RNA sequence: GGGAACGACUCGAGUAGAGUCGAAAAGACCUGACUGUUUUUAAAAGCGAAUGCCAGUGAGUGAAAUGCCAGCUCCCUGUACAGUUACUAGAGCUCCUGGGAAUGCAUGGCCAGUGACACAAGUGAGUUUUUUUACUCUAUUCGUAGAGUAAAAAAAAAAAGAAACAACAACAACAAC
Reactivity to DMS in 0.01 (KOAc 150mM, MgCl2 10mM, bicine 150mM(pH8.5), 24C), signal-to-noise 6, nucleotides 027 to 126: g000a170c030c010u000g010a090c070u010g000u000u000u010u020u030a050a110a130a150g010c050g000a090a080u030g000c050c010a040g010u020g000a080g020u010g000a080a080a070u020g010c040c020a070g000c030u000c030c020c010u000g010u020a060c180a060g010u010u020a070c110u020a090g010a150g000c020u000c050c030u000g010g000g000a070a060u020g010c040a050u010g010g000c010c050a050g000u010g000a080c080a050c080a050a100g010u020g010a100g000
Reactivity to 2A3 in 0.01 (KOAc 150mM, MgCl2 10mM, bicine 150mM(pH8.5), 24C), signal-to-noise 5, nucleotides 027 to 126: g040a030c000c000u010g040a030c020u030g190u030u040u000u060u150a130a140a030a000g050c040g030a080a020u100g030c020c010a020g030u040g100a030g000u070g050a150a080a030u140g020c010c010a010g020c000u010c010c010c020u030g040u050a040c020a030g010u050u070a050c040u060a040g050a020g060c000u020c000c010u030g010g000g020a060a070u110g040c030a040u040g010g000c000c010a030g020u040g070a020c000a010c010a090a070g050u050g100a060g010